[RMDB]
RNA sequence: GGGAACGACUCGAGUAGAGUCGAAAAGAAAAUGACAGUUAACGCUACUUUAGUAAAUAACAGUAAUGAACGUUUCUGUAUUGAAAAUGAUACUGAAACUUAUACUGUAGAAGAGUUCUGGGAAUUGAGCGUCGACUGCGACGAUUAAUUUAAUGGGCGCUCUUUAUCGCUUCGGCGAUAAAGAGCGAAAAGAAACAACAACAACAAC
Reactivity to 2A3 in 0.01 (KOAc 150mM, MgCl2 10mM, bicine 150mM(pH8.5), 24C), signal-to-noise 1, nucleotides 027 to 156: g000a000a120a060a030u080g030a060c010a010g000u080u000a050a020c000g000c010u030a090c010u180u110u220a050g080u160a160a090a060u160a050a000c000a010g000u030a000a090u160g110a070a000c090g000u000u000u000c010u080g030u030a000u000u050g090a030a040a040a070u220g000a000u000a000c030u000g000a000a000a000c000u000u000a050u000a030c000u000g040u030a030g090a200a000g030a000g080u240u130c180u240g000g090g060a010a140u090u020g040a030g080c080g000u050c090g010a000c030u070g000c010g000a000c000g000a000u040u150a050a080u170u300u300a060a030u240g040g010g000